[RMDB]
The data come from the RNA Mapping Database (RMDB), library OK2TST. The record gives the reactivity of an RNA of 177 nucleotides to DMS and 2A3.
RNA sequence: GGGAACGACUCGAGUAGAGUCGAAAAGCGAUGAUAAUGUUUUGGGUAUCCACCCAAACAUUGAGUCUGCCUUUAAUGGCAAUGCAAUUAAGGCCUACAUGAAGGAGGAAUUGGGGAUUAAAAUCACACAUAAGUUGUUUUUCGAAACAACUUAUGUAAAAGAAACAACAACAACAAC
Reactivity to DMS in 0.01 (KOAc 150mM, MgCl2 10mM, bicine 150mM(pH8.5), 24C), signal-to-noise 9, nucleotides 027 to 126: g010c080g010a030u000g000a240u020a010a000u000g010u000u000u010u010g020g000g010u000a130u010c300c260a110c000c000c000a000a010a010c000a000u000u000g000a300g000u000c020u000g030c010c010u000u000u010a050a090u000g010g010c020a080a060u010g010c050a060a070u000u010a050a090g010g000c020c020u000a080c120a080u000g010a070a070g000g000a080g000g000a060a090u010u000g010g000g000g000a140u010u010a040a050a090a090u010c140a090c200
Reactivity to 2A3 in 0.01 (KOAc 150mM, MgCl2 10mM, bicine 150mM(pH8.5), 24C), signal-to-noise 9, nucleotides 027 to 126: g040c030g020a020u040g010a020u080a260a010u030g050u020u130u100u070g030g000g000u050a130u160c090c060a030c010c000c020a000a010a000c000a000u000u000g000a010g010u000c040u050g010c000c000u050u080u100a090a090u090g000g020c030a040a090u120g020c020a010a030u080u050a120a040g060g010c000c010u040a040c040a110u180g060a080a020g030g030a030g010g050a060a060u140u090g040g000g010g010a000u050u170a080a120a030a070u150c050a030c000
The reactions ran in a buffer of 150 mM KOAc, 10 mM MgCl2 and 150 mM bicine (pH 8.5), at 24 C.